[RMDB]
RNA sequence: GGGAACGACUCGAGUAGAGUCGAAAACUACUAUUCGUAGUAGGUCUCGCGUACUACAAACUAAGACAGUGAUGAUCUACCCACCCACGUCCCAAAUAGGACGUGGAGGAUCCUCACAAUGACGGUUUGUAUCGCUAUCAACGGCAUUCGUGCCGAAUCCAUGCCUGCAAUUCGUUGCAGGCAUGGAAAAAGAAACAACAACAACAAC
Reactivity to DMS in 0.01 (KOAc 150mM, MgCl2 10mM, bicine 150mM(pH8.5), 24C), signal-to-noise 1, nucleotides 027 to 156: c030u000a020c000u000a030u020u040c230g080u000a060g000u000a020g000g040u000c020u000c010g040c000g020u000a110c120u000a040c010a050a000a000c000u010a050a300g030a190c050a290g030u010g000a010u000g000a020u000c020u000a040c030c070c040a300c120c000c000a030c030g040u000c000c000c000a110a160a150u010a030g030g000a000c040g020u000g010g000a050g020g030a040u000c010c060u000c010a040c000a180a110u010g000a190c190g020g000u000u000u000g000u000a020u000c010g020c060u040a150u020c030a070a080c000g010g000c000a090u000u010c260g000u000g000c000c000g060a050a020
Reactivity to 2A3 in 0.01 (KOAc 150mM, MgCl2 10mM, bicine 150mM(pH8.5), 24C), signal-to-noise 3, nucleotides 027 to 156: c000u030a000c000u030a040u180u050c260g080u050a010g000u000a000g000g080u000c000u000c000g000c000g000u050a190c000u000a000c000a010a000a020c010u070a080a170g170a140c050a050g020u010g000a020u000g000a010u000c010u040a030c080c040c010a000c000c000c000a000c000g010u000c020c020c000a100a300a050u300a070g020g000a000c000g010u010g000g000a000g000g020a000u020c000c010u040c010a000c010a100a290u120g030a020c040g010g010u000u020u000g060u050a120u300c020g000c020u030a060u120c100a020a100c040g000g000c020a030u050u030c200g080u140g000c000c000g010a000a000
Chemical mapping of a 207-nucleotide RNA with DMS and 2A3. The DMS profile rests on 1,633 reads. It was measured as part of the RMDB library RNAMAK. The RNA was probed in 150 mM KOAc, 10 mM MgCl2 and 150 mM bicine (pH 8.5) at 24 C.